[RMDB]
RNA sequence: GGGAACGACUCGAGUAGAGUCGAAAAGCGCCUGCUGGCGCCAUCCGUUUGGCCGGGACAGCGAUAUCGCCGACCGAGCCGGCCACCCGGUCGUACAGGUGGCCUAUCCGGACGCCGUGGCCUACGCUAUAGCGCUAUGGUUCGCCAUAGCGCUAUAAAAAGAAACAACAACAACAAC
Reactivity to 2A3 in 0.01 (KOAc 150mM, MgCl2 10mM, bicine 150mM(pH8.5), 24C), signal-to-noise 1, nucleotides 027 to 126: g000c020g000c010c040u220g050c230u160g060g010c040g010c020c000a050u000c010c000g020u060u110u140g010g000c020c010g000g000g030a090c110a030g020c000g100a090u100a100u300c030g020c020c080g010a050c000c000g040a030g000c010c000g000g000c000c000a000c030c010c000g110g090u180c120g030u130a050c040a000g040g000u000g010g040c020c000u010a050u040c000c010g010g000a050c020g020c000c010g030u060g010g000c000c030u040a080c060g000c060
Reactivity to DMS in 0.01 (KOAc 150mM, MgCl2 10mM, bicine 150mM(pH8.5), 24C), signal-to-noise 2, nucleotides 027 to 126: g010c060g020c040c030u010g040c220u000g000g010c050g030c080c040a050u000c060c010g000u000u030u010g020g030c020c000g020g000g010a080c300a070g010c030g040a240u010a070u000c050g050c050c030g020a280c010c000g010a040g000c090c180g000g000c010c010a060c010c000c040g000g000u020c300g000u000a130c050a050g010g020u000g000g010c000c020u000a040u000c110c020g000g000a130c020g010c060c070g020u010g000g000c020c020u010a070c070g020c090
Conditions: 150 mM KOAc, 10 mM MgCl2 and 150 mM bicine (pH 8.5), 24 C. The record gives the reactivity of an RNA of 177 nucleotides to 2A3 and DMS. The DMS profile rests on 1,544 reads. It was measured as part of the RMDB library OK2TRN.